RNA sequence: GGGAACGACUCGAGUAGAGUCGAAAACAACCUGGUGGAUUUAGCAGGAUCUGAAAGGCAAAAAGAUACCCAUGCAGAAGGGAUGAGAUUGAAGGAAGCAGGUAACAUAAAUCGAUCAUUGAGCUGCCGAAAGGAACAAUUUCGAUUGUUCCUUUCGAAAAGAAACAACAACAACAAC
Reactivity to DMS in 0.01 (KOAc 150mM, MgCl2 10mM, bicine 150mM(pH8.5), 24C), signal-to-noise 6, nucleotides 027 to 126: c130a110a140c050c020u010g010g040u020g000g000a060u000u010u000a080g000c080a060g010g000a060u000c030u000g000a090a080a070g010g010c100a030a070a070a090a070g000a120u000a110c040c010c030a090u010g010c060a070g010a100a070g000g000g010a050u000g010a070g010a090u010u000g000a080a080g010g000a060a090g000c040a020g000g000u000a040a040c080a050u000a050a060a070u000c080g010a070u000c050a090u000u000g010a090g000c040u000g000c110
Reactivity to 2A3 in 0.01 (KOAc 150mM, MgCl2 10mM, bicine 150mM(pH8.5), 24C), signal-to-noise 3, nucleotides 027 to 126: c010a010a080c000c010u050g020g030u070g020g050a090u030u050u080a070g050c070a030g010g080a020u040c010u060g080a100a070a030g040g010c050a020a080a000a080a000g040a030u140a070c000c010c040a040u110g000c040a010g030a150a020g020g030g020a020u060g040a060g010a050u040u150g060a060a050g030g010a040a040g000c040a010g040g040u040a040a020c030a060u130a080a110a040u070c050g030a020u060c020a010u040u090g050a020g040c030u030g000c030
The record gives the reactivity of an RNA of 177 nucleotides to DMS and 2A3.
2A3 adducts were read by reverse transcription with SuperScript II with manganese.
It was measured as part of the RMDB library OK2TRN.